[RMDB]
Chemical mapping of a 177-nucleotide RNA with DMS. The reactions ran in a buffer of 150 mM KOAc, 10 mM MgCl2 and 150 mM bicine (pH 8.5), at 24 C. It was measured as part of the RMDB library TTRINS.
RNA sequence: GGGAACGACUCGAGUAGAGUCGAAAAGAUAUGGAUAGAAUCAACUAGUCUGGUGGGAGCUCCCCGAAUUCGGAAACGAAUUCCGGCGAGCGAAGAACACCAGAGCUAGUUGAUUCUAUCCUAAGUCGUUAAUUAGACGGUUCGCCGUCUAAUUAACAAAAGAAACAACAACAACAAC
Reactivity to DMS in 0.01 (KOAc 150mM, MgCl2 10mM, bicine 150mM(pH8.5), 24C), signal-to-noise 1, nucleotides 027 to 126: g030a090u010a300u010g000g010a030u000a010g020a020a020u000c000a010a000c000u000a010g000u000c000u010g000g010u000g000g000g000a170g020c000u040c000c080c000c120g010a020a020u000u000c000g000g000a140a120a260c000g020a070a020u000u010c090c210g060g030c300g020a020g040c000g000a040a060g020a160a200c030a010c020c000a000g010a060g010c010u000a000g000u000u010g000a040u000u000c000u000a000u000c000c000u000a000a050g020u000c090